The record gives the reactivity of an RNA of 207 nucleotides to 2A3. The 2A3 profile rests on 873 reads.
[RMDB]
RNA sequence: GGGAACGACUCGAGUAGAGUCGAAAAGGUCCCAAGACAGACUGUUCCAUUGGAGCACACAAUACGUACAUGGAAUCAACCCAUGCUGGGUGGGGCUGGCCAGCACAGUUAUUGUAUGAUGCCAAAAAUCUGUCCCUGGACUAUAAAGCUAUACCUAGCACUAGCUAAUCUUCGGAUUAGCUAGUGCAAAAGAAACAACAACAACAAC
Reactivity to 2A3 in 0.01 (KOAc 150mM, MgCl2 10mM, bicine 150mM(pH8.5), 24C), signal-to-noise 2, nucleotides 027 to 156: g100g030u000c030c000c010a000a000g010a000c020a000g050a050c040u100g040u190u080c030c030a100u120u180g040g000a080g050c050a060c030a010c030a050a050u100a060c070g080u060a050c010a170u010g010g070a060a080u070c010a030a100c040c000c020a030u090g050c090u060g050g050g050u070g020g040g030g030c050u020g000g040c020c000a000g020c040a010c020a050g050u140u120a050u020u040g000u020a070u090g060a050u120g010c000c030a010a100a000a030a040u000c010u000g020u000c040c010c030u020g000g010a030c020u070a030u150a140a160a000g000c020u030a000u060a160c030c010u060a020
The reactions ran in a buffer of 150 mM KOAc, 10 mM MgCl2 and 150 mM bicine (pH 8.5), at 24 C.